Source: RMDB library RFMREP, as collected in RNAgym. The record gives the reactivity of an RNA of 177 nucleotides to DMS. The RNA was probed in 150 mM KOAc, 10 mM MgCl2 and 150 mM bicine (pH 8.5) at 24 C. Values cover nucleotides 27 to 126. High DMS reactivity at an A or C suggests that its Watson-Crick edge is free. For DMS, 850 sequencing reads were counted. DMS adducts were read by reverse transcription with MarathonRT.

[RMDB]
RNA sequence: GGGAACGACUCGAGUAGAGUCGAAAAAAGCCAUGAUGAUUUUAUAGUUCAGCUAAUCUACGGAUUUGAUGAUAAAUUUCGCCCCUAUCAGAGCUUAAACCGUGUCACAGGUUCGCCUGUGACACGGCUAUUCUGUCAUCUUCGGAUGACAGAAUAGAAAAGAAACAACAACAACAAC
Reactivity to DMS in 0.01 (KOAc 150mM, MgCl2 10mM, bicine 150mM(pH8.5), 24C), signal-to-noise 1, nucleotides 027 to 126: a070a030g000c010c100a120u010g000a060u020g010a070u030u000u010u010a050u020a140g010u000u000c010a020g020c050u000a000a010u000c030u000a180c150g060g000a010u000u000u000g020a070u000g010a040u010a030a060a080u000u010u000c060g000c050c000c000c040u000a070u000c060a080g000a250g000c000u000u000a020a100a190c000c010g020u020g010u010c010a000c000a020g000g000u000u010c200g010c020c000u020g050u000g000a000c000a000c000g010g010